[RMDB]
RNA sequence: GGGAACGACUCGAGUAGAGUCGAAAAAUAACUGAGAAUCAGCUCUGUGGGCACUGAAUUGACAUAUUGGAAAAUCACUAGAGACUUGGAACCAUUCCAUAUCAGUAGCCAAACUCUGGUGCUAUCAAUACGAGGCUAAUUUCGAUUAGCCUCGUAUAAAAGAAACAACAACAACAAC
Reactivity to DMS in 0.01 (KOAc 150mM, MgCl2 10mM, bicine 150mM(pH8.5), 24C), signal-to-noise 1, nucleotides 027 to 126: a140u000a060a090c060u000g010a240g020a220a100u020c030a060g010c050u000c040u000g030u000g000g020g000c070a060c030u000g010a040a130u000u010g010a050c100a080u000a070u000u000g000g000a080a080a110a080u000c000a000c010u000a000g000a010g010a080c130u000u010g020g000a050a140c110c000a180u010u000c030c050a010u000a030u000c040a130g020u020a040g000c010c030a010a020a060c030u000c040u000g020g020u000g010c160u000a100u000c050a070

An RNA of 177 nucleotides, treated with DMS and read out base by base. For DMS, 728 sequencing reads were counted. The data come from the RNA Mapping Database (RMDB), library OK2TRN. The reactions ran in a buffer of 150 mM KOAc, 10 mM MgCl2 and 150 mM bicine (pH 8.5), at 24 C.